[RMDB]
Chemical mapping of a 177-nucleotide RNA with DMS and 2A3. High DMS reactivity at an A or C suggests that its Watson-Crick edge is free. Values cover nucleotides 27 to 126. For DMS, 1,095 sequencing reads were counted. For DMS the reverse transcriptase was MarathonRT. Conditions: 150 mM KOAc, 10 mM MgCl2 and 150 mM bicine (pH 8.5), 24 C.
RNA sequence: GGGAACGACUCGAGUAGAGUCGAAAAGAUAUGGACUGUGAAUUCGUCACCAUGGCGAAGAACUAAAGUAUUAUCGGAAACGAUAAUACUUUAGGGAGCCAUGGAAGUCGAAUCACAGUCCUAAGUCCAUUACGACCGUGUUCGCACGGUCGUAAUGAAAAGAAACAACAACAACAAC
Reactivity to DMS in 0.01 (KOAc 150mM, MgCl2 10mM, bicine 150mM(pH8.5), 24C), signal-to-noise 1, nucleotides 027 to 126: g020a100u000a300u000g010g010a030c000u000g020u000g010a140a130u000u000c010g000u000c050a300c000c010a010u000g020g040c010g000a100a100g040a190a160c000u000a000a020a010g000u000a010u000u000a000u000c000g000g000a170a090a300c000g010a000u010a010a000u000a000c000u000u000u000a000g000g000g020a140g020c000c000a010u000g000g000a040a100g030u020c000g000a010a010u010c000a020c020a010g000u010c000c000u010a010a070g010u000c030
Reactivity to 2A3 in 0.01 (KOAc 150mM, MgCl2 10mM, bicine 150mM(pH8.5), 24C), signal-to-noise 1, nucleotides 027 to 126: g060a020u140a100u240g000g000a000c010u050g010u030g050a300a300u020u010c020g020u010c010a000c080c000a020u000g000g000c060g230a300a030g000a090a030c010u020a030a010a020g000u000a000u010u000a000u000c020g070g010a160a060a110c010g020a000u000a010a000u000a000c010u010u010u000a010g000g000g030a000g000c000c000a000u010g000g000a000a020g020u080c000g000a000a000u010c000a000c000a000g000u010c000c000u000a000a000g000u000c010